[RMDB]
RNA sequence: GGGAACGACUCGAGUAGAGUCGAAAAGAUAUGGAUUGAAAUAUAGCAAGGCGAAGUGAUCGGAAACGAUCACCGCUGAUGACCUAUAUCGUACGUCCUAAGUCAAACACCCACUUCGGUGGGUGAACUUUAGGUUCGAGUUCGCUCGAACCUAAAGAAAAGAAACAACAACAACAAC
Reactivity to 2A3 in 0.01 (KOAc 150mM, MgCl2 10mM, bicine 150mM(pH8.5), 24C), signal-to-noise 1, nucleotides 027 to 126: g000a000u020a010u070g030g000a000u110u300g160a300a140a010u040a000u000a000g030c030a080a100g000g000c030g080a270a050g030u000g020a000u000c000g000g030a010a030a000c010g000a000u000c000a000c010c010g030c010u010g030a060u030g000a000c010c030u010a010u000a000u030c030g020u040a200c300g000u000c000c000u000a010a010g020u020c000a010a020a180c010a040c020c000c060a000c000u060u050c210g220g030u010g010g000g000u010g010a030a010
Reactivity to DMS in 0.01 (KOAc 150mM, MgCl2 10mM, bicine 150mM(pH8.5), 24C), signal-to-noise 2, nucleotides 027 to 126: g000a000u000a050u010g000g000a040u000u030g000a110a060a030u000a000u000a010g000c010a050a030g000g030c010g000a230a180g030u000g000a000u000c000g000g000a040a010a070c010g000a020u000c000a000c000c020g000c000u000g000a080u020g020a010c300c000u000a020u000a000u000c020g010u020a140c210g010u000c000c010u000a010a120g000u000c000a110a040a130c020a000c000c020c000a000c000u000u010c160g020g030u000g000g000g010u000g000a030a060
Conditions: 150 mM KOAc, 10 mM MgCl2 and 150 mM bicine (pH 8.5), 24 C.
An RNA of 177 nucleotides, treated with 2A3 and DMS and read out base by base.
2A3 adducts were read by reverse transcription with SuperScript II with manganese.
Source: RMDB library TTRDEL, as collected in RNAgym.
For DMS the reverse transcriptase was MarathonRT.